[RMDB]
RNA sequence: GGGAACGACUCGAGUAGAGUCGAAAAGAAAGAAGAAAAACCGUGUGAACUAUGAUGGCCUUACAAAGCUCGACGAAAAGAAACACUUGAUACUACCGAAAGCCAGAGCUGCUGCAUACGGAAGAAAGACCGUCGUGAUAUUCGUAUCACGACGGUCAAAAGAAACAACAACAACAAC
Reactivity to DMS in 0.01 (KOAc 150mM, MgCl2 10mM, bicine 150mM(pH8.5), 24C), signal-to-noise 1, nucleotides 027 to 126: g000a130a120a010g030a000a090g040a090a000a080a170a000c020c050g000u040g020u040g140a080a040c060u000a080u000g060a080u000g040g000c000c150u050u040a050c100a010a040a080g010c010u000c000g000a000c120g000a040a060a000a280g000a080a000a080c090a110c130u030u000g000a040u000a200c080u040a030c160c050g010a230a140a050g000c100c010a000g000a030g000c000u000g030c000u000g000c010a000u010a000c040g000g000a110a010g010a040a260a250
Reactivity to 2A3 in 0.01 (KOAc 150mM, MgCl2 10mM, bicine 150mM(pH8.5), 24C), signal-to-noise 1, nucleotides 027 to 126: g130a000a040a010g070a100a020g070a000a000a000a000a000c020c020g000u000g100u130g060a080a070c000u010a100u070g040a100u130g090g000c030c000u070u020a000c000a040a050a000g030c020u010c070g090a060c000g040a060a030a030a030g030a000a140a000c040a000c030u130u050g000a030u030a120c090u030a000c040c000g100a030a000a000g040c030c030a000g030a030g000c030u030g060c000u030g030c000a010u000a030c000g030g070a000a100g010a000a110a000
The record gives the reactivity of an RNA of 177 nucleotides to DMS and 2A3. For 2A3 the reverse transcriptase was SuperScript II with manganese. The DMS profile rests on 869 reads. The data come from the RNA Mapping Database (RMDB), library OK1LIB. DMS adducts were read by reverse transcription with MarathonRT. Reactivities are given for positions 27 through 126. Conditions: 150 mM KOAc, 10 mM MgCl2 and 150 mM bicine (pH 8.5), 24 C.